Description
Chemical mapping of a 207-nucleotide RNA with DMS and 2A3. Source: RMDB library RNAMAK, as collected in RNAgym. The 2A3 profile rests on 2,755 reads. The RNA was probed in 150 mM KOAc, 10 mM MgCl2 and 150 mM bicine (pH 8.5) at 24 C. Values cover nucleotides 27 to 156.
[RMDB]
RNA sequence: GGGAACGACUCGAGUAGAGUCGAAAAUCUUCCCCUUCGGGGGAAGAAAAUCCUAAGUCAGCUUGGACCCUUCUUAAGAGCGAGGAUCUAUUCGGAAACGAAUAGGGAGCUCUGGAAGGCUAGCUGAUAUGGAAAAAGCUUAGCGUUCGCGCUAAGCCACUUCAAAUUACUUCGGUAAUUUGAAGUGAAAAGAAACAACAACAACAAC
Reactivity to DMS in 0.01 (KOAc 150mM, MgCl2 10mM, bicine 150mM(pH8.5), 24C), signal-to-noise 1, nucleotides 027 to 156: u000c000u010u010c000c000c000c010u000u010c260g000g070g050g040g010a000a010g000a030a020a080a180u000c020c010u000a090a270g010u000c010a030g010c010u010u000g040g000a140c240c000c000u000u000c000u000u030a210a050g040a020g070c000g010a090g040g010a070u000c010u000a020u000u000c020g000g020a220a130a270c000g000a010a010u000a020g020g000g000a070g030c000u010c000u010g010g010a010a020g010g060c020u010a000g010c010u000g000a020u010a170u000g000g010a010a070a110a180a180g000c000u010u000a000g010c000g030u000u010c300g030c000g000c000u000a010a020g010c000
Reactivity to 2A3 in 0.01 (KOAc 150mM, MgCl2 10mM, bicine 150mM(pH8.5), 24C), signal-to-noise 3, nucleotides 027 to 156: u030c000u000u000c010c000c000c010u020u120c300g100g000g000g020g010a000a000g010a040a030a020a000u010c010c000u010a080a010g030u000c000a010g000c020u060u100g080g100a260c070c000c000u020u010c030u140u250a120a000g000a000g000c000g020a270g010g010a010u010c000u010a000u010u000c000g050g000a070a100a100c000g000a010a010u000a000g000g000g010a010g020c010u000c010u000g000g010a000a000g000g020c000u000a000g010c000u000g010a000u010a060u060g030g020a040a050a030a170a020g000c000u010u010a010g000c010g100u050u080c300g030c000g000c110u000a000a000g000c000